[RMDB]
RNA sequence: GGGAACGACUCGAGUAGAGUCGAAAACCAGAGAGUUAAGAAGGAAUGUGCAACCAUCCGUCUGUAAAGGCGGUAAAUUGAUGGCUGGCCUGAUAUAAGGCUGGCGCACCGUAUCGGUGUCCCUGAGACUACUCGCGAAUUUCGAUUCGCGAGUAGUAAAAGAAACAACAACAACAAC
Reactivity to DMS in 0.01 (KOAc 150mM, MgCl2 10mM, bicine 150mM(pH8.5), 24C), signal-to-noise 4, nucleotides 027 to 126: c010c020a150g000a100g000a120g020u020u030a050a060g010a130a110g000g010a070a040u010g010u000g010c020a050a070c060c030a120u020c010c000g030u000c000u000g030u060a070a100a020g020g000c000g000g000u000a010a020a080u000u020g020a090u030g010g010c010u000g000g000c000c000u000g010a150u040a140u040a110a040g010g010c000u000g010g010c000g010c010a020c030c000g030u030a130u010c060g000g000u000g000u010c030c010c010u010g000a150g010
Reactivity to 2A3 in 0.01 (KOAc 150mM, MgCl2 10mM, bicine 150mM(pH8.5), 24C), signal-to-noise 3, nucleotides 027 to 126: c000c000a010g030a010g000a010g080u150u210a140a000g070a100a090g040g050a080a080u120g070u030g040c000a000a040c020c000a040u080c000c000g010u050c000u030g100u110a090a100a120g000g000c010g000g010u010a020a020a010u040u110g010a010u100g080g010c000u000g000g000c000c000u080g060a070u060a100u080a300a050g000g000c000u020g000g020c020g000c020a000c000c010g050u120a070u230c130g030g020u010g030u000c000c080c000u040g000a040g040
An RNA of 177 nucleotides, treated with DMS and 2A3 and read out base by base. Values cover nucleotides 27 to 126. The data come from the RNA Mapping Database (RMDB), libraries RFM100 and RFMREP.